[RMDB]
RNA sequence: GGGAACGACUCGAGUAGAGUCGAAAAGCAAGGCGGUCCUCACCGAGGACGAGAAGGACCUGGGAGUCGUCCACAUCGACAUCGGAGGAGGCACUACCGAUGUGGUGGUGUAUCUGGGUGGAGCGCCCACGUGUUUCGAUUUCGAUCGAAACACGUGAAAAGAAACAACAACAACAAC
Reactivity to 2A3 in 0.01 (KOAc 150mM, MgCl2 10mM, bicine 150mM(pH8.5), 24C), signal-to-noise 2, nucleotides 027 to 126: g090c070a060a030g050g050c010g020g300u000c010c030u040c040a130c000c040g020a040g060g000a050c020g020a020g030a050a080g050g000a010c030c090u100g010g080g080a070g060u080c030g000u000c020c000a040c020a070u030c010g050a020c010a060u030c020g030g050a060g070g000a030g010g000c020a030c030u050a040c000c000g080a090u220g130u170g120g010u010g000g010u050g000u020a070u010c070u070g030g010g030u030g050g000a030g020c020g030c020c000
Reactivity to DMS in 0.01 (KOAc 150mM, MgCl2 10mM, bicine 150mM(pH8.5), 24C), signal-to-noise 3, nucleotides 027 to 126: g020c150a070a070g010g020c060g010g000u000c000c000u010c040a300c040c010g020a040g010g000a100c030g010a090g010a130a140g010g000a130c020c090u020g020g020g000a070g000u000c070g000u000c000c000a120c110a140u000c020g010a100c050a030u000c010g020g010a170g000g020a110g010g000c040a040c020u010a080c000c010g010a160u020g030u010g030g010u000g000g010u000g010u010a030u010c070u010g010g010g030u000g020g000a050g000c070g000c020c030
This 177-nucleotide RNA was probed chemically with 2A3 and DMS. 2A3 adducts were read by reverse transcription with SuperScript II with manganese. For 2A3, 2,066 sequencing reads were counted. It was measured as part of the RMDB library OK2TRN. DMS adducts were read by reverse transcription with MarathonRT.